Annotation:
Chemical mapping of a 177-nucleotide RNA with DMS and 2A3. The DMS profile rests on 454 reads. Reactivities are given for positions 27 through 126. The data come from the RNA Mapping Database (RMDB), library OK2TST. The reactions ran in a buffer of 150 mM KOAc, 10 mM MgCl2 and 150 mM bicine (pH 8.5), at 24 C. For DMS the reverse transcriptase was MarathonRT. The 2A3 profile rests on 1,217 reads.

[RMDB]
RNA sequence: GGGAACGACUCGAGUAGAGUCGAAAAUGAGUUUGCCUACCUCAACAAGGGCAAGGACAUACAUGCCCUCUGGGACGACUAUGACACCAUAGUGUACGGGGACGACAGACUUACAUCCACCCCAUGCCCGUGUCACGCUUUUCGAAGCGUGACACGGAAAAGAAACAACAACAACAAC
Reactivity to DMS in 0.01 (KOAc 150mM, MgCl2 10mM, bicine 150mM(pH8.5), 24C), signal-to-noise 1, nucleotides 027 to 126: u020g020a000g000u000u000u000g000c000c000u000a300c090c080u000c060a210a160c130a100a030g000g000g030c010a100a060g000g000a160c300a130u000a140c230a040u000g010c000c000c000u000c100u000g000g000g030a060c160g060a050c000u010a000u000g020a110c110a160c260c000a000u000a010g000u000g000u000a090c040g000g070g030g000a060c220g000a000c000a000g000a140c010u000u000a120c120a150u010c020c040a190c010c000c000c000a030u010g090c090
Reactivity to 2A3 in 0.01 (KOAc 150mM, MgCl2 10mM, bicine 150mM(pH8.5), 24C), signal-to-noise 1, nucleotides 027 to 126: u090g020a000g010u070u020u020g000c010c000u030a060c030c010u030c010a070a040c000a020a030g050g000g000c000a000a090g090g040a090c060a150u300a040c010a030u100g010c000c010c000u030c160u030g040g000g090a030c070g010a010c050u010a010u030g020a070c000a040c300c000a000u000a000g010u040g000u060a050c090g000g030g000g030a000c030g000a000c030a020g040a020c000u020u060a000c030a060u000c030c010a020c000c000c000c000a020u150g000c000